[RMDB]
Source: RMDB library OK1LIB, as collected in RNAgym. Structure probing data (2A3 and DMS) for a 177-nucleotide construct.
RNA sequence: GGGAACGACUCGAGUAGAGUCGAAAACUGCCGACAGACAGUGUGGAGGCCUGGUUUUGGGUCUAGUCUUUCGUUGAGAUCCGAAGAAGGGUGUACUUCUGACUGAAAGAUCAGAUGUCUGUCGAGAGCGUCUGCGUUGCUUCGGCAGCGUGGGCGCAAAAGAAACAACAACAACAAC
Reactivity to 2A3 in 0.01 (KOAc 150mM, MgCl2 10mM, bicine 150mM(pH8.5), 24C), signal-to-noise 9, nucleotides 027 to 126: c010u020g010c010c000g000a000c000a000g000a000c000a010g040u030g020u040g120g100a020g000g030c000c000u030g040g010u030u010u020u020g000g000g000u000c000u010a020g040u010c000u030u150u070c060g070u030u100g080a010g000a020u000c000c000g000a020a010g040a020a030g020g000g000u050g020u040a050c000u010u000c000u020g040a020c010u010g050a040a040a010g080a090u050c010a000g030a100u020g000u000c000u000g000u000c000g010a030g010a010
Reactivity to DMS in 0.01 (KOAc 150mM, MgCl2 10mM, bicine 150mM(pH8.5), 24C), signal-to-noise 9, nucleotides 027 to 126: c010u000g010c080c010g000a010c000a000g000a020c000a030g010u030g010u020g010g020a070g010g010c000c000u010g010g020u030u010u010u000g000g000g010u000c000u000a080g010u020c080u010u020u020c100g020u030u040g010a060g010a040u010c020c030g010a030a020g000a090a090g000g010g010u010g010u040a100c020u010u000c010u000g000a110c040u000g010a050a060a070g000a080u010c030a040g000a090u010g000u000c000u000g000u000c000g000a080g000a120
Reactivities are given for positions 27 through 126. The RNA was probed in 150 mM KOAc, 10 mM MgCl2 and 150 mM bicine (pH 8.5) at 24 C.